[RMDB]
RNA sequence: GGGAACGACUCGAGUAGAGUCGAAAAACAACUGAGUGAGUAGCCCCAACCCUAAUCUGUUUUUAUCUAGGCUAGAAGGGGAUUGGGCCUCCAGGGUAAAACACGAUUGGUGUUUUCCCCGGAAAACUCCGUGUGGUUCCUGUGGGGCACACCCCCUACACAUAUACGUGUUCGCACGUAUAUGUGUAAAAGAAACAACAACAACAAC
Reactivity to 2A3 in 0.01 (KOAc 150mM, MgCl2 10mM, bicine 150mM(pH8.5), 24C), signal-to-noise 1, nucleotides 027 to 156: a000c040a040a080c040u080g030a040g060u070g010a060g020u080a040g040c020c020c010c050a030a030c030c020c010u010a050a120u040c000u080g040u070u060u020u050u070a210u110c080u080a030g130g000c010u030a020g060a170a030g030g030g050g000a060u040u040g000g000g000c010c010u000c010c010a000g000g000g000u000a020a000a030a000c000a000c050g230a300u150u300g200g000u010g080u000u020u070u030c030c000c010c000g000g030a060a080a060a080c070u010c000c020g010u050g030u060g010g000u020u030c000c000u020g060u240g020g000g000g000c040a010c000a000c040c000c000c000c010u010